[RMDB]
RNA sequence: GGGAACGACUCGAGUAGAGUCGAAAAGCUGGCAGAGCUCAGUGCCAGAAGCGGUGUCAGUCGGGCGACACUAUCGAGAAUUGAAAACGGCGAAGUGAGUCCUACCGCUCAAGUGUUAGGCAAGCUCAAGACCUAGCUAUUUCGAUAGCUAGGUCUUAAAAGAAACAACAACAACAAC
Reactivity to DMS in 0.01 (KOAc 150mM, MgCl2 10mM, bicine 150mM(pH8.5), 24C), signal-to-noise 4, nucleotides 027 to 126: g010c030u000g000g000c050a080g020a070g020c030u020c080a100g030u000g020c010c010a070g000a180a070g010c020g000g000u010g020u000c100a080g020u010c180g010g010g020c020g000a150c040a010c000u000a080u000c030g020a080g010a110a120u000u010g010a100a040a120a130c240g000g000c020g010a040a040g000u010g000a300g010u010c020c010u000a060c000c020g010c030u000c050a030a100g010u000g000u010u000a100g010g010c070a090a080g000c040u000c070
Reactivity to 2A3 in 0.01 (KOAc 150mM, MgCl2 10mM, bicine 150mM(pH8.5), 24C), signal-to-noise 2, nucleotides 027 to 126: g000c000u020g050g030c030a000g010a010g080c000u000c030a090g050u040g040c000c010a050g030a040a000g020c030g050g020u070g050u220c070a090g060u100c020g010g060g000c010g110a180c020a000c030u050a080u160c060g030a070g070a170a180u080u180g060a050a030a010a100c090g120g000c000g030a040a010g000u010g020a010g010u000c010c040u040a020c010c000g030c000u000c010a010a060g000u010g120u140u110a020g020g030c030a040a010g000c010u020c020